Structure probing data (DMS and 2A3) for a 207-nucleotide construct. For DMS the reverse transcriptase was MarathonRT. For 2A3, 2,589 sequencing reads were counted. For 2A3 the reverse transcriptase was SuperScript II with manganese. Values cover nucleotides 27 to 156.

RNA sequence: GGGAACGACUCGAGUAGAGUCGAAAAACUCCUAUUCCAACACGUCCUCGUCGUACAGAGUGGUAACAUGUGUCACCACAUAUCCAAGCUUGGGUAAACGGGCUUGACCCAACCCCUUGGGCGGAUGAAAACCAGAUUACGUUCGCGUAAUCUGGAAGAUCCGAAUGUACUUCGGUACAUUCGGAUCAAAAGAAACAACAACAACAAC
Reactivity to DMS in 0.01 (KOAc 150mM, MgCl2 10mM, bicine 150mM(pH8.5), 24C), signal-to-noise 1, nucleotides 027 to 156: a060c090u000c040c000u000a100u010u030c030c040a080a090c120a110c040g000u000c030c000u000c040g040u000c040g000u000a120c080a150g030a170g040u000g000g050u010a030a060c010a230u000g040u020g020u000c030a060c000c000a030c020a040u010a070u000c000c020a010a300g000c090u000u040g000g010g080u000a040a030a120c150g030g000g010c050u000u000g010a180c010c000c030a080a130c060c030c000c020u000u000g020g020g000c300g000g000a080u000g010a090a120a120a160c000c000a000g000a020u000u000a000c010g000u000u020c240g000c000g000u020a000a020u000c000u000g000g010a000a050
Reactivity to 2A3 in 0.01 (KOAc 150mM, MgCl2 10mM, bicine 150mM(pH8.5), 24C), signal-to-noise 2, nucleotides 027 to 156: a000c070u070c040c000u050a120u130u050c050c030a080a030c030a030c080g050u040c010c040u060c020g110u040c020g040u100a080c050a040g120a050g100u030g000g030u070a090a040c050a160u180g110u070g050u110c010a000c000c000a020c010a090u090a010u040c020c010a000a010g020c020u000u000g000g000g000u000a010a020a040c020g020g000g000c010u160u240g160a300c000c000c010a000a030c000c000c000c000u000u000g000g000g000c000g020g000a020u090g030a060a060a020a020c000c000a000g000a000u000u000a000c010g030u040u030c170g000c000g100u000a000a000u000c000u000g000g000a000a010